[RMDB]
RNA sequence: GGGAACGACUCGAGUAGAGUCGAAAAAGUGGCUUCGGCCACUACUACGAUAUGGAUCGCUCAUAGACAUGUCCCAGAGCUAAUACUCGGAAACGAGGAUAACCGUGGGACAACAGCUAUGAACGAUCCUAAGUCAGCGCGCCUGCUUCGGCAGGAACGUAACAUGGUUUUUCGAAACCAUGUUACGAAAAGAAACAACAACAACAAC
Reactivity to 2A3 in 0.01 (KOAc 150mM, MgCl2 10mM, bicine 150mM(pH8.5), 24C), signal-to-noise 5, nucleotides 027 to 156: a000g020u020g010g010c030u080u070c260g120g010c010c010a000c000u000a000c000u040a020c030g050a010u040a030u120g000g000a010u000c000g030c010u000c010a010u010a080g080a260c080a130u090g000u000c000c000c000a040g060a020g060c020u040a060a040u110a300c000u000c010g010g030a030a060a040c040g000a000g020g040a060u040a060a040c060c110g180u100g000g000g010a000c010a040a030c070a060g090c000u000a000u000g000a000a000c000g000a000u000c000c000u000a000a000g010u010c040a040g070c090g020c020g040c100c000u010g000c010u080u080c190g110g000c000a010g000g000a020a070
Reactivity to DMS in 0.01 (KOAc 150mM, MgCl2 10mM, bicine 150mM(pH8.5), 24C), signal-to-noise 1, nucleotides 027 to 156: a050g050u000g030g000c010u000u010c300g060g000c000c010a010c000u000a010c020u010a210c080g000a110u000a210u020g020g010a060u010c010g000c000u000c020a060u000a020g000a070c030a300u000g000u010c020c000c000a040g020a090g030c030u000a030a100u000a100c020u000c030g030g000a110a130a270c020g010a030g000g000a150u000a040a010c010c000g000u000g000g000g020a020c000a020a060c110a160g000c000u000a030u030g010a010a000c000g000a020u000c010c000u020a000a040g000u010c050a120g010c100g030c090g000c000c000u040g000c000u010u000c160g040g000c000a020g000g000a120a140